[RMDB]
RNA sequence: GGGAACGACUCGAGUAGAGUCGAAAAGUCACGUGCUCUGUUUUUAUCAUGGUUGGGAGCCUGCAGAGCAAUAAGGGACAUGCCUUUGCUGAUUUGAGGAUUCCUCUGAGGUUGGGAGCUAAGUUUGGCGAAGCACAUGAUUCGUCAUGUGCUUCGCAAAAGAAACAACAACAACAAC
Reactivity to DMS in 0.01 (KOAc 150mM, MgCl2 10mM, bicine 150mM(pH8.5), 24C), signal-to-noise 1, nucleotides 027 to 126: g000u010c070a030c120g000u000g000c010u000c000u020g000u000u010u000u000u000a140u070c080a100u020g020g000u000u010g010g020g030a160g030c030c020u000g010c020a020g000a020g010c020a020a090u010a070a100g000g000g000a070c080a050u000g000c020c030u000u010u000g000c110u000g020a120u000u010u010g000a050g020g000a170u000u000c030c020u000c090u000g020a090g020g000u000u010g010g010g000a040g000c040u000a050a110g030u000u000u000g010